[RMDB]
RNA sequence: GGGAACGACUCGAGUAGAGUCGAAAAACUGAUGAGAUUGACCGUCGAUGUCCCGAACUCUUGUGCCGUUCGUUCAAGUGCUGUUCCUUCGAUGACAGUCGGGAUAUUGAGCUGUAACAAGAGGCGUGUGGUUAUUCUGCCUGUAAUAACAGCAGCACUUGGUAUGAGAUUUCGAUCUCAUACCAAGAAAAGAAACAACAACAACAAC
Reactivity to DMS in 0.01 (KOAc 150mM, MgCl2 10mM, bicine 150mM(pH8.5), 24C), signal-to-noise 2, nucleotides 027 to 156: a100c010u000g040a070u010g020a100g000a180u000u000g010a080c040c020g000u010c010g010a110u010g010u000c010c020c010g010a060a110c020u000c020u000u000g030u000g000c010c070g030u010u000c070g010u000u000c070a120a140g020u000g010c000u010g010u000u000c070c050u010u000c120g010a180u010g000a060c040a050g050u000c020g030g000g020a090u000a090u010u000g030a090g030c020u000g030u000a090a070c060a060a100g010a070g000g010c120g000u000g040u010g010g010u000u010a160u000u000c020u000g000c020c020u000g040u000a060a100u000a140a120c070a060g010c000a070g000c010a170
Reactivity to 2A3 in 0.01 (KOAc 150mM, MgCl2 10mM, bicine 150mM(pH8.5), 24C), signal-to-noise 6, nucleotides 027 to 156: a000c100u130g020a070u070g020a050g050a120u080u130g010a080c030c010g020u040c030g050a070u050g060u040c010c000c000g040a130a120c010u020c000u020u020g020u020g020c020c020g060u040u040c000g010u000u030c070a140a050g020u070g110c010u000g040u150u070c040c000u140u190c110g160a220u190g020a010c010a010g010u010c010g030g020g000a030u030a040u120u130g010a010g000c010u010g020u070a100a070c020a030a010g010a000g030g030c060g060u130g030u040g010g070u040u030a060u100u020c010u020g070c080c020u020g030u060a070a120u060a240a030c010a000g000c010a010g000c000a010
Source: RMDB library OK3TST, as collected in RNAgym. This 207-nucleotide RNA was probed chemically with DMS and 2A3. As a SHAPE reagent, 2A3 marks flexible, mostly unpaired nucleotides at the ribose 2'-OH. For 2A3, 4,601 sequencing reads were counted. 2A3 adducts were read by reverse transcription with SuperScript II with manganese.